Conditions: 150 mM KOAc, 10 mM MgCl2 and 150 mM bicine (pH 8.5), 24 C. Structure probing data (DMS) for a 177-nucleotide construct. The DMS profile rests on 743 reads. For DMS the reverse transcriptase was MarathonRT. Source: RMDB library OK2TST, as collected in RNAgym.
RNA sequence: GGGAACGACUCGAGUAGAGUCGAAAAGAGUACCCACUUGAAUGACAAUGCAGGAAAGGAAGCGCAGAUUGGAGAAGGGUACUGUCACUGCUUCUACCACAGCCGCUGCUUUGAAUGUGAAAAGAGGCCACCUAGUGCUAUUCGUAGCACUAGGUGGAAAAGAAACAACAACAACAAC
Reactivity to DMS in 0.01 (KOAc 150mM, MgCl2 10mM, bicine 150mM(pH8.5), 24C), signal-to-noise 1, nucleotides 027 to 126: g010a100g020u010a190c060c010c020a150c120u010u000g000a100a060u030g020a130c210a070a100u010g020c000a040g020g000a210a040a020g010g010a060a030g000c060g040c010a110g020a200u040u000g000g010a030g000a060a020g000g040g010u010a140c200u000g070u010c100a000c000u030g020c040u000u000c010u000a080c040c010a040c100a050g020c120c050g010c020u000g000c020u000u000u000g020a250a140u000g000u000g010a040a070a060a190g000a140g020g030